This 207-nucleotide RNA was probed chemically with 2A3. The reactions ran in a buffer of 150 mM KOAc, 10 mM MgCl2 and 150 mM bicine (pH 8.5), at 24 C. Values are in units of 0.01, from 0 to 300, in steps of 10.
[RMDB]
RNA sequence: GGGAACGACUCGAGUAGAGUCGAAAAGAAAGAAAGAAAGAAACCGUCUCUGCUAGUCUCACGGUAACCACGUUGAAAUCGCAACGAAAGAAGCUCGUACUCAACUUCAACGGCUUAACGAGUGCAAAAAACUUACUGAUCUUCGGAUCAGUAAGAAGACAGAGAGUCUGUUCGCAGACUCUCUGUCAAAAGAAACAACAACAACAAC
Reactivity to 2A3 in 0.01 (KOAc 150mM, MgCl2 10mM, bicine 150mM(pH8.5), 24C), signal-to-noise 1, nucleotides 027 to 156: g020a010a080a000g080a080a110a050g010a040a170a000g010a130a150a000c030c040g050u020c020u020c000u020g010c010u060a050g060u020c010u010c030a010c000g050g000u030a030a030c020c020a040c020g030u030u040g050a110a130a070u160c180g000c060a000a050c020g060a180a000a000g030a000a060g050c040u070c170g000u030a030c040u030c040a010a110c020u060u040c000a060a020c040g020g000c010u060u020a010a020c010g000a000g050u050g050c080a000a000a000a000a000a170c000u000u000a000c000u000g000a000u000c010u030u050c170g100g000a010u000c000a000g000u000a000a000g000a000a000